[RMDB]
The data come from the RNA Mapping Database (RMDB), library OK1LIB. Chemical mapping of a 177-nucleotide RNA with 2A3 and DMS. DMS adducts were read by reverse transcription with MarathonRT. The reactions ran in a buffer of 150 mM KOAc, 10 mM MgCl2 and 150 mM bicine (pH 8.5), at 24 C. Reactivities are given for positions 27 through 126.
RNA sequence: GGGAACGACUCGAGUAGAGUCGAAAAUGGGCAUCGACGGGUUUCGGUUGGACGCGGUGCCCUAUCUCUUUGAACGUGAGGGCACCAACUGCGAGAACCUGCCGGAAACACACGCUUUUCUCAAGCGGGAUGUAGUUGCAUUCGUGCAACUACAUCCAAAAGAAACAACAACAACAAC
Reactivity to 2A3 in 0.01 (KOAc 150mM, MgCl2 10mM, bicine 150mM(pH8.5), 24C), signal-to-noise 3, nucleotides 027 to 126: u100g010g050g000c020a090u070c040g090a090c040g040g000g060u010u030u040c020g000g050u020u060g020g030a040c040g010c050g010g000u010g010c000c000c000u020a030u000c020u010c000u090u240u130g160a130a030c130g010u030g030a020g000g000g000c010a000c000c010a050a050c050u090g000c010g030a120g030a130a070c000c000u020g000c030c010g040g030a060a070a000c040a000c020a010c070g020c000u010u020u060u000c030u000c050a090a010g050c040g000
Reactivity to DMS in 0.01 (KOAc 150mM, MgCl2 10mM, bicine 150mM(pH8.5), 24C), signal-to-noise 1, nucleotides 027 to 126: u050g000g000g000c090a140u000c120g010a110c120g020g050g030u020u040u000c000g000g030u000u010g010g000a150c080g000c140g070g000u000g000c020c000c000u000a040u000c030u000c090u000u010u020g000a060a070c120g020u000g000a000g000g000g000c000a000c000c000a100a110c210u010g010c030g000a220g000a020a030c060c040u000g000c090c000g000g000a160a000a090c100a000c120a270c070g040c000u000u000u000u000c000u000c030a090a020g010c190g030